[RMDB]
RNA sequence: GGGAACGACUCGAGUAGAGUCGAAAAUAAGCACCUCGUUAGGUGAGGCGGCUACACGCACAUAGGCCACUGACCCCGAACGUCGAGAGACGCCCCGGGUCAGGACAGCUCUUCCCGGCUUAAGGGUAAAAUCACAACGUCUUCGGACGUUGUGAAAGGUUUAUUAUAAGUUCGCUUAUAAUAAACCAAAAGAAACAACAACAACAAC
Reactivity to 2A3 in 0.01 (KOAc 150mM, MgCl2 10mM, bicine 150mM(pH8.5), 24C), signal-to-noise 3, nucleotides 027 to 156: u150a040a020g030c010a030c010c000u030c050g130u140u300a100g060g060u100g040a020g020g010c080g050g000c020u110a040c090a030c120g110c020a060c020a150u190a070g130g000c030c020a060c030u000g000a000c000c000c000c080g020a070a010c000g000u000c000g000a020g010a010g000a180c000g010c000c020c040c040g000g000g010u000c000a000g000g010a010c020a010g000c010u040c010u050u030c000c020c000g000g000c010u080u110a050a050g070g000g020u080a080a080a030a090u030c000a000c000a000a000c000g000u000c000u030u050c120g060g000a000c000g000u000u000g000u000g000a000a000a000
Reactivity to DMS in 0.01 (KOAc 150mM, MgCl2 10mM, bicine 150mM(pH8.5), 24C), signal-to-noise 2, nucleotides 027 to 156: u010a090a060g010c000a060c010c010u000c000g000u010u000a170g030g040u000g010a060g010g030c030g010g000c050u000a110c080a060c170g020c040a120c060a120u000a090g040g020c000c030a190c030u000g020a080c020c010c000c070g010a030a010c010g020u000c010g030a300g030a300g030a040c010g000c010c000c040c180g020g030g050u000c000a000g020g000a020c020a170g010c050u000c040u000u000c000c000c030g110g010c020u000u020a050a100g030g010g030u000a010a120a110a150u000c010a000c020a040a040c000g000u000c000u000u010c300g040g040a010c000g010u000u000g020u010g000a010a050a050

Record summary:
Structure probing data (2A3 and DMS) for a 207-nucleotide construct. For 2A3 the reverse transcriptase was SuperScript II with manganese. It was measured as part of the RMDB library M2RFPK. The DMS profile rests on 2,690 reads. The reactions ran in a buffer of 150 mM KOAc, 10 mM MgCl2 and 150 mM bicine (pH 8.5), at 24 C. For 2A3, 3,063 sequencing reads were counted.